[RMDB]
RNA sequence: GGGAACGACUCGAGUAGAGUCGAAAACCUCUAAACAGGUUCGAGCACUCGUUGUCCGACUCCGUUAAGGGCAGCGGGUUAACCCCAACGGAUGCGCUAGACAGUUCUCUCUGGUGGGCUGUUUAGCAAAGACUCGACCAGAGCAUCCUACUGUUCGCAGUAAUAUGGUCUUCGGACCAUAUUACUGAAAAGAAACAACAACAACAAC
Reactivity to 2A3 in 0.01 (KOAc 150mM, MgCl2 10mM, bicine 150mM(pH8.5), 24C), signal-to-noise 3, nucleotides 027 to 156: c010c000u020c080u080a110a130a040c070a060g030g060u090u120c090g100a070g090c100a030c050u000c000g000u000u000g010u020c010c010g000a000c020u010c010c000g000u010u010a020a010g000g000g000c010a000g000c000g030g010g000u000u050a010a010c020c000c000c020a000a010c000g000g000a000u000g000c010g000c020u000a000g000a000c000a000g010u020u000c060u000c010u000c000u010g020g000u000g000g000g000c000u010g010u000u000u010a000g010c000a000a000a000g010a000c070u060c240g090a000c000c010a010g000a000g000c010a080u140c010c070u110a170c060u100g040u050u050c040g000
Reactivity to DMS in 0.01 (KOAc 150mM, MgCl2 10mM, bicine 150mM(pH8.5), 24C), signal-to-noise 1, nucleotides 027 to 156: c010c000u010c040u040a110a120a130c030a020g040g040u000u000c010g010a210g010c090a050c010u010c040g030u010u030g000u000c000c040g030a140c050u000c030c040g040u000u000a190a160g000g030g040c020a050g000c020g020g000g010u000u010a120a100c050c030c090c070a100a120c050g020g010a050u000g010c040g000c020u000a010g020a000c030a010g010u010u000c020u000c010u020c030u010g000g000u030g010g120g000c000u000g010u010u000u000a000g040c050a020a130a290g000a090c070u000c090g000a130c020c050a030g000a110g000c070a100u000c070c030u000a170c090u000g000u000u000c090g000

Conditions: 150 mM KOAc, 10 mM MgCl2 and 150 mM bicine (pH 8.5), 24 C. An RNA of 207 nucleotides, treated with 2A3 and DMS and read out base by base. In probing experiments dimethyl sulfate is read out at A N1 and C N3, which are open when not base-paired. Source: RMDB library RSTRND, as collected in RNAgym. Values are in units of 0.01, from 0 to 300, in steps of 10. 2A3 adducts were read by reverse transcription with SuperScript II with manganese.